This 177-nucleotide RNA was probed chemically with DMS.
RNA sequence: GGGAACGACUCGAGUAGAGUCGAAAAGAUAUGGACACCGUCUCUGCAUCAGCGAGUGGUCGGAAACGACCAUACUCGCGACGACGCAGAGAGCGGUGUCCUAAGUCAAAGUUGCCUUCGGGCAACAUCAGCCAAUUUACUUCGGUAAAUUGGCUGAAAAAGAAACAACAACAACAAC
Reactivity to DMS in 0.01 (KOAc 150mM, MgCl2 10mM, bicine 150mM(pH8.5), 24C), signal-to-noise 2, nucleotides 027 to 126: g020a120u020a300u010g010g010a020c000a010c000c000g040u000c000u000c000u000g030c010a090u000c000a170g010c030g000a030g070u000g000g020u000c000g020g000a140a070a230c040g000a010c000c020a070u020a030c020u000c010g030c000g020a060c260g020a040c040g000c000a020g000a000g010a010g030c050g030g030u000g000u000c000c000u000a010a080g020u010c020a120a160a130g010u010u000g000c000c000u000u000c240g060g000g030c000a000a000c040a080